[RMDB]
RNA sequence: GGGAACGACUCGAGUAGAGUCGAAAAGCAUCGUAUGGCAGAUGUCAUAGAAGGUACAAACAUUGAUAAAAUUGAAGUGAAUAUAAAAUAAUCAUGACGUUCUCUAAAUAGAAGCUGACAUCGGUAACGGGAGGUAAUGAUUCGUCAUUACCUCCCGAAAAGAAACAACAACAACAAC
Reactivity to DMS in 0.01 (KOAc 150mM, MgCl2 10mM, bicine 150mM(pH8.5), 24C), signal-to-noise 2, nucleotides 027 to 126: g000c040a050u000c030g000u050a040u010g010g000c070a050g000a010u040g000u040c060a000u010a020g000a070a020g020g000u040a050c010a150a090a190c150a050u030u000g010a070u020a020a030a240a050u000u030g010a130a090g000u030g000a090a170u050a020u040a050a000a040a080u010a010a040u000c010a000u020g030a240c030g000u000u000c010u030c050u030a030a090a090u000a110g020a160a050g000c040u040g000a070c010a010u000c030g000g000u040a060a120
Reactivity to 2A3 in 0.01 (KOAc 150mM, MgCl2 10mM, bicine 150mM(pH8.5), 24C), signal-to-noise 3, nucleotides 027 to 126: g000c030a100u060c070g070u190a000u170g030g030c090a020g000a070u140g020u050c020a000u030a040g140a080a020g080g060u150a010c040a000a150a030c010a110u080u100g010a050u210a100a200a170a100u160u110g030a200a000g130u060g060a130a000u040a090u140a140a090a030a030u140a000a060u110c090a080u070g020a010c040g030u090u020c000u010c020u040a030a020a000u070a110g080a240a060g050c090u040g010a000c000a030u030c020g020g000u040a070a040

Notes
This 177-nucleotide RNA was probed chemically with DMS and 2A3. 2A3 adducts were read by reverse transcription with SuperScript II with manganese. Source: RMDB library OK1LIB, as collected in RNAgym. Values cover nucleotides 27 to 126. DMS (dimethyl sulfate) methylates the pairing face of unpaired adenines and cytosines. The reactions ran in a buffer of 150 mM KOAc, 10 mM MgCl2 and 150 mM bicine (pH 8.5), at 24 C. For DMS, 1,972 sequencing reads were counted.